[RMDB]
RNA sequence: GGGAACGACUCGAGUAGAGUCGAAAACCCCGUCCCCACGGGAAAGGGUGGUGUGCUUUUUUCUGCGUGCGUCUUCACGGGCGUCGCGCGGGCCCCGCUCUUUUUUAUUACGUUUCCUUCGGGGGGCGUGACUCGUGGGUACCCAACCGUGCUGUAACUAUCUAAAAUCGUUCGCGAUUUUAGAUAGAAAAGAAACAACAACAACAAC
Reactivity to 2A3 in 0.01 (KOAc 150mM, MgCl2 10mM, bicine 150mM(pH8.5), 24C), signal-to-noise 1, nucleotides 027 to 156: c000c000c000c010g030u020c000c030c010c010a000c000g000g020g000a020a020a010g010g020g010u010g000g000u070g050u100g000c030u260u290u190u110u160u100c060u160g000c020g000u010g010c020g020u050c010u160u180c150a060c110g040g010g010c020g070u140c040g030c010g000c000g000g050g020c010c010c000c000g000c010u000c000u020u000u000u000u040u040a020u010u010a000c000g000u000u010u030c000c000u030u130c170g000g000g000g000g000g000c000g000u000g000a010c000u000c000g010u000g010g010g000u010a010c060c040c010a060a090c090c100g110u080g040c030u040g050u090a080a070